An RNA of 177 nucleotides, treated with 2A3 and DMS and read out base by base. Values cover nucleotides 27 to 126. The RNA was probed in 150 mM KOAc, 10 mM MgCl2 and 150 mM bicine (pH 8.5) at 24 C. For DMS, 4,003 sequencing reads were counted. 2A3 adducts were read by reverse transcription with SuperScript II with manganese.

[RMDB]
RNA sequence: GGGAACGACUCGAGUAGAGUCGAAAAACUUUUAGCGUUUGCAAGACGCUGUUCUUGCAAUGUUCUGGAUUUAGCGCACGGAGGUCCGAAAUCCAGAUCAACAUUUCGGACCUCCGCGCUAAUAAAAUACCAAUAUAAAGUUCGCUUUAUAUUGGUAAAAAGAAACAACAACAACAAC
Reactivity to 2A3 in 0.01 (KOAc 150mM, MgCl2 10mM, bicine 150mM(pH8.5), 24C), signal-to-noise 2, nucleotides 027 to 126: a000c050u160u200u080u140a060g030c000g030u030u060u090g020c000a000a000g010a010c050g090c300u160g060u100u000c000u000u000g000c000a030a030u030g020u050u010c050u050g060g020a070u060u000u000a010g010c010g030c050a040c150g010g000a000g000g020u010c000c020g030a020a010a010u080c120c060a130g030a220u140c010a010a080c010a050u000u010u000c000g030g010a000c030c010u010c000c010g010c000g000c000u000a000a000u000a010a000a000a020
Reactivity to DMS in 0.01 (KOAc 150mM, MgCl2 10mM, bicine 150mM(pH8.5), 24C), signal-to-noise 4, nucleotides 027 to 126: a090c070u010u000u010u010a080g000c020g000u000u000u000g000c020a020a010g000a010c010g030c250u010g010u010u000c000u000u000g000c000a020a030u000g010u000u000c110u000g000g010a180u000u000u000a010g010c010g010c050a090c170g060g030a020g020g000u000c000c000g000a000a010a000u000c120c130a150g010a100u010c180a090a100c190a050u010u000u000c010g010g000a020c000c000u000c000c000g010c010g000c000u010a010a000u000a040a060a060a140